RNA sequence: GGGAACGACUCGAGUAGAGUCGAAAAAAAAAUAACGUGAGGAAGCAGAAGAAAGACUGCAAGAACACGAACCACCAAACAUCAGGAACAGCAAGAAAGAGCUGAAGAAGAUGAAGCACCAAAAAAACUUACCAUAUAAGUUCGCUUAUAUGGUAAGAAAAGAAACAACAACAACAAC
Reactivity to 2A3 in 0.01 (KOAc 150mM, MgCl2 10mM, bicine 150mM(pH8.5), 24C), signal-to-noise 2, nucleotides 027 to 126: a000a010a030a010a010u060a030a010c010g000u000g000a020g040g060a180a020g020c000a000g010a140a020g120a070a210a020g150a070c000u010g010c020a050a060g070a080a010c010a010c000g020a040a020c030c010a020c010c000a010a060a120c000a020u030c010a010g050g010a010a020c000a010g010c020a010a080g050a230a140a020g100a110g000c010u010g030a040a000g020a030a000g000a030u040g000a030a000g020c030a070c050c070a060a080a030a000a000a000a110
Reactivity to DMS in 0.01 (KOAc 150mM, MgCl2 10mM, bicine 150mM(pH8.5), 24C), signal-to-noise 2, nucleotides 027 to 126: a000a020a000a020a060u060a080a060c050g020u000g030a130g010g010a300a140g000c010a040g020a050a040g000a070a090a140g000a010c000u000g060c000a060a180g000a280a100c020a010c040g010a090a090c050c050a100c040c070a070a060a100c010a030u000c060a040g000g000a180a090c010a010g010c020a040a070g020a080a100a070g020a090g010c020u000g010a020a040g000a180a150g000a040u000g000a110a100g000c110a050c040c050a000a010a040a040a010a070a080